[RMDB]
RNA sequence: GGGAACGACUCGAGUAGAGUCGAAAAAAGGUGCCAUCAUAUCGGUUAAGAACACUUAACUCUGAUGGCUUUCGAGUUAUGUGGUGCAUUGAAGCUCUCCCUUCAAAUGGUCGUACAGUUCCGUGAAUAGGAAUUUCGUUUUCGAACGAAAUUCCUAAAAAGAAACAACAACAACAAC
Reactivity to DMS in 0.01 (KOAc 150mM, MgCl2 10mM, bicine 150mM(pH8.5), 24C), signal-to-noise 1, nucleotides 027 to 126: a030a080g010g000u010g000c010c000a030u000c000a030u000a090u020c230g010g000u010u000a010a000g010a250a120c300a080c010u000u000a010a000c010u000c070u010g010a030u000g030g010c060u010u000u000c050g010a120g000u010u010a070u010g010u000g000g030u010g000c040a080u010u010g000a060a030g000c010u030c070u000c030c050c010u000u000c050a040a090a060u010g000g030u000c040g020u010a020c100a060g000u000u000c020c010g030u000g000a040a090

Chemical mapping of a 177-nucleotide RNA with DMS. It was measured as part of the RMDB library M2PK90. Reactivities are given for positions 27 through 126. Conditions: 150 mM KOAc, 10 mM MgCl2 and 150 mM bicine (pH 8.5), 24 C.